[RMDB]
RNA sequence: GGGAACGACUCGAGUAGAGUCGAAAACAUCCGACCUUGUUACAGAGAGCGUCAAUGUCAAUAUUAUAACCUUGGUCGGUGACAUACGCUUACUUGUUUUCUAAUGCUGUGGAUAGGAAGCAUGCUCACCAAAGGGGUCAUUCGUGACCCCUUUGGUAAAAGAAACAACAACAACAAC
Reactivity to DMS in 0.01 (KOAc 150mM, MgCl2 10mM, bicine 150mM(pH8.5), 24C), signal-to-noise 2, nucleotides 027 to 126: c130a150u000c040c020g010a030c020c010u000u000g020u020u020a090c170a130g010a160g010a030g000c020g000u000c090a080a010u000g000u000c010a050a080u010a180u020u020a080u000a100a110c080c070u000u000g000g000u000c010g010g010u000g010a010c050a040u000a020c020g010c010u000u000a170c090u000u000g000u010u010u000u000c040u020a100a080u000g040c070u000g000u000g010g000a140u000a090g010g000a090a060g000c000a030u000g010c160u000c160
Reactivity to 2A3 in 0.01 (KOAc 150mM, MgCl2 10mM, bicine 150mM(pH8.5), 24C), signal-to-noise 1, nucleotides 027 to 126: c010a060u050c020c010g010a000c000c010u110u120g090u250u190a060c090a070g230a030g000a000g120c000g010u030c010a010a020u000g060u000c000a020a110u080a060u110u260a260u040a110a010c010c010u040u000g040g000u010c000g070g000u040g000a000c010a010u150a000c000g000c000u000u020a050c000u010u090g030u010u030u020u000c000u020a080a030u120g050c070u130g060u140g130g040a010u060a050g100g030a000a000g000c040a000u110g080c040u090c000

Structure probing data (DMS and 2A3) for a 177-nucleotide construct. The 2A3 profile rests on 758 reads. For DMS, 1,848 sequencing reads were counted.